This 207-nucleotide RNA was probed chemically with DMS. Source: RMDB library RNAMAK, as collected in RNAgym.
[RMDB]
RNA sequence: GGGAACGACUCGAGUAGAGUCGAAAAGCGUACUACGGUGAGGCAGAAGACAUGGCUUACAAGAUGAGGUAUUAACCAGUCAUCUAUCCCAAAUAGGAUAGAUGACUGGUUAAUACUUGAGUAAGCCAACAGCUUCUGCUACCCACCACCGUAUCGCGUUGAUAUAUUACUUCGGUAAUAUAUCAACAAAAGAAACAACAACAACAAC
Reactivity to DMS in 0.01 (KOAc 150mM, MgCl2 10mM, bicine 150mM(pH8.5), 24C), signal-to-noise 5, nucleotides 027 to 156: g020c040g010u000a070c080u010a020c010g010g020u000g000a190g030g000c000a020g010a040a010g000a050c060a300u000g010g010c000u000u020a010c000a060a270g020a300u000g010a090g030g000u000a010u000u000a010a010c000c000a010g010u000c000a000u000c000u000a000u000c000c000c020a060a120a220u010a070g010g010a020u000a000g020a010u000g000a010c000u000g010g000u000u000a000a010u000a000c000u000u000g000a220g000u000a010a020g000c000c000a020a020c070a160g010c000u000u000c000u000g000c000u000a000c000c010c010a300c130c000a010c010c000g000u000a020u000c050g000c110